[RMDB]
This 177-nucleotide RNA was probed chemically with DMS and 2A3.
The DMS profile rests on 1,383 reads.
2A3 adducts were read by reverse transcription with SuperScript II with manganese.
For DMS the reverse transcriptase was MarathonRT.
The 2A3 profile rests on 1,230 reads.
RNA sequence: GGGAACGACUCGAGUAGAGUCGAAAAGAAAACUGAGGGAUUUUCUAAUAUUAGAUCGAAUAACUCGUUCUUGAUGAGUUCCGUAAAAGCGGUCUUGAGAUUAGCAAAUUCUAAUCUAAUCGAAAAAGGGUAUGUAUCAGUUCGCUGAUACAUACCCAAAAGAAACAACAACAACAAC
Reactivity to DMS in 0.01 (KOAc 150mM, MgCl2 10mM, bicine 150mM(pH8.5), 24C), signal-to-noise 1, nucleotides 027 to 126: g000a050a080a110a050c130u020g000a080g000g000g000a020u000u000u000u000c000u000a010a050u060a140u030u000a000g000a010u020c020g000a070a090u000a120a090c030u000c020g000u020u000c160u050u010g000a050u000g000a020g010u000u010c160c230g000u000a030a120a120a090g010c010g000g030u000c000u000u000g050a000g000a000u000u000a000g000c190a030a030a020u000u000c010u040a030a100u030c000u000a120a060u040c050g000a070a020a030a030a050
Reactivity to 2A3 in 0.01 (KOAc 150mM, MgCl2 10mM, bicine 150mM(pH8.5), 24C), signal-to-noise 2, nucleotides 027 to 126: g010a000a010a000a010c030u000g000a090g020g050g020a010u000u010u020u000c000u070a030a030u040a110u190u060a030g030a010u050c010g010a070a100u180a140a050c010u010c000g040u050u080c010u040u130g050a080u060g000a010g000u030u080c020c030g070u070a000a080a000a080g000c000g000g000u000c000u030u160g090a160g000a000u000u000a000g020c000a110a000a000u000u000c000u030a030a060u010c000u020a020a030u120c080g040a110a000a010a000a000

The data come from the RNA Mapping Database (RMDB), library OK1LIB.